[RMDB]
RNA sequence: GGGAACGACUCGAGUAGAGUCGAAAACUCAGCAUCACGACUUGGUGAUAUAAUCGGUGCAAAGCCGAUAUUAAGAAUCUGUACUUUCGAUGCGUCUCCAGUGAUCCCCGUGGGAGAGCGGGCAUCUAUUGUACAUUCAUUCACAUAGACAAUAAACUCGAACAAGCUGUUUCGACAGCUUGUUCGAAAAAGAAACAACAACAACAAC
Reactivity to 2A3 in 0.01 (KOAc 150mM, MgCl2 10mM, bicine 150mM(pH8.5), 24C), signal-to-noise 2, nucleotides 027 to 156: c000u010c000a070g030c020a060u070c010a030c080g180a180c170u200u180g070g000u010g020a020u010a010u040a080a110u020c020g000g030u050g030c070a040a150a000g010c000c010g010a000u000a020u060u110a210a020g000a000a000u050c050u020g000u020a000c000u000u010u030c030g020a020u000g010c040g160u040c050u000c000c020a090g030u030g110a120u070c050c000c000c070g060u140g050g000g010a020g000a020g070c000g070g120g010c000a000u000c020u020a010u000u000g010u000a000c000a000u040u060c010a020u050u060c000a050c030a160u180a040g110a000c100a080a130u140a100a080a010c080
Structure probing data (2A3) for a 207-nucleotide construct.
The RNA was probed in 150 mM KOAc, 10 mM MgCl2 and 150 mM bicine (pH 8.5) at 24 C.
It was measured as part of the RMDB library OK3TST.